[RMDB]
RNA sequence: GGGAACGACUCGAGUAGAGUCGAAAAAGCCGGUCUACGGACCGGCAAAACGUUCUUCUCGUUUUACGGGCCGCAUUAAGAUUGAAGCCAAGGAACGGGGACUUCAGACUACGACUACGGUCGUAGAUUACGCCUCCGAGUUUCGACUCGGAGGCAAGAAAUAUUCAUGCUUCGGCAUGAAUAUUUCAAAAGAAACAACAACAACAAC
Reactivity to 2A3 in 0.01 (KOAc 150mM, MgCl2 10mM, bicine 150mM(pH8.5), 24C), signal-to-noise 1, nucleotides 027 to 156: a000g020c000c040g000g000u000c000u020a040c270g140g000a040c000c030g000g000c000a000a000a050a000c000g000u040u040c000u130u010c000u000c010g000u030u030u000u110a060c120g050g000g000c050c050g130c080a050u160u190a100a060g120a200u060u140g050a070a050g000c020c030a070a030g140g030a070a060c070g040g000g000g010a090c080u060u010c060a080g040a180c000u040a000c010g020a000c000u020a010c130g060g000u000c010g000u000a000g000a010u050u260a040c020g000c000c000u000c020c000g010a010g010u050u080u110c140g140a080c030u000c000g000g000a000g000g000c010a000a000